The record gives the reactivity of an RNA of 177 nucleotides to 2A3 and DMS. For 2A3 the reverse transcriptase was SuperScript II with manganese. High 2A3 reactivity points to a flexible backbone, as in loops and unpaired stretches. It was measured as part of the RMDB library RFMREP.

[RMDB]
RNA sequence: GGGAACGACUCGAGUAGAGUCGAAAACCUGCCCAGUGUUGGUACCUGAAAGCUCUUUUCAAGGAGAAGAAGGGCCAAUAAACGGCGGGGGUAACUAUGACCCUCUCAAGGUAGCGUAAUACCUAGCGCUAUCUUUAAUCUUCGGAUUAAAGAUAGCAAAAGAAACAACAACAACAAC
Reactivity to 2A3 in 0.01 (KOAc 150mM, MgCl2 10mM, bicine 150mM(pH8.5), 24C), signal-to-noise 5, nucleotides 027 to 126: c000c000u010g010c040c030c040a190g010u010g010u040u010g100g000u280a300c000c000u030g010a100a060a030g010c000u000c010u050u130u170u170c150a150a100g030g000a000g000a030a010g030a010a000g000g010g000c000c000a000a000u010a000a120a000c010g000g010c020g000g000g000g000g000u030a090a040c090u100a130u300g090a060c000c000c000u030c030u030c070a070a010g010g010u020a020g050c060g140u090a110a070u020a070c010c010u020a040g060c040
Reactivity to DMS in 0.01 (KOAc 150mM, MgCl2 10mM, bicine 150mM(pH8.5), 24C), signal-to-noise 4, nucleotides 027 to 126: c000c000u010g020c000c000c060a190g010u000g020u000u010g000g010u000a110c000c000u010g000a140a140a080g010c010u000c000u020u000u020u020c290a160a150g000g010a010g010a040a010g010a300a030g000g000g010c000c000a000a000u010a040a160a170c170g000g000c080g000g000g010g020g020u020a080a090c190u010a090u010g000a090c020c000c010u000c050u000c150a060a080g010g000u000a030g000c180g000u000a070a070u000a090c020c030u000a080g010c210